[RMDB]
This 177-nucleotide RNA was probed chemically with DMS and 2A3. The reactions ran in a buffer of 150 mM KOAc, 10 mM MgCl2 and 150 mM bicine (pH 8.5), at 24 C. For 2A3 the reverse transcriptase was SuperScript II with manganese. For 2A3, 713 sequencing reads were counted. DMS (dimethyl sulfate) methylates the pairing face of unpaired adenines and cytosines.
RNA sequence: GGGAACGACUCGAGUAGAGUCGAAAAAUCUUUGCCAAUAUUAGUGACAUCUCAAAACGUAUGCACAGAUCAUUGGACCAUGUUAUCCAAUUUUUGUUUGCAGAGUUGGGUACUAGCGGUAGUGUUAGCUCGGUACUACUUUCGAGUAGUACCGAGCAAAAGAAACAACAACAACAAC
Reactivity to DMS in 0.01 (KOAc 150mM, MgCl2 10mM, bicine 150mM(pH8.5), 24C), signal-to-noise 1, nucleotides 027 to 126: a050u000c020u000u000u000g000c000c030a080a030u000a050u000u000a160g030u000g000a060c090a080u000c030u010c080a040a040a070a090c300g000u000a140u000g020c000a040c060a220g000a010u000c110a050u020u000g010g010a110c050c090a130u000g000u000u000a130u000c010c000a010a010u000u000u000u000u000g000u010u000u000g070c020a040g000a040g000u000u000g000g000g020u010a050c070u000a040g010c100g000g020u000a040g000u000g000u010u020a110
Reactivity to 2A3 in 0.01 (KOAc 150mM, MgCl2 10mM, bicine 150mM(pH8.5), 24C), signal-to-noise 1, nucleotides 027 to 126: a000u000c010u050u070u050g060c000c000a010a100u040a090u140u000a040g020u050g060a110c000a040u000c020u060c170a040a030a070a170c040g050u160a050u120g000c000a000c000a030g070a060u050c020a040u050u030g020g040a020c030c010a020u120g000u090u060a000u000c030c020a000a040u000u040u000u060u110g080u080u230u140g000c050a010g010a000g020u080u000g030g000g050u070a040c010u020a010g050c080g050g000u050a050g030u120g090u100u080a010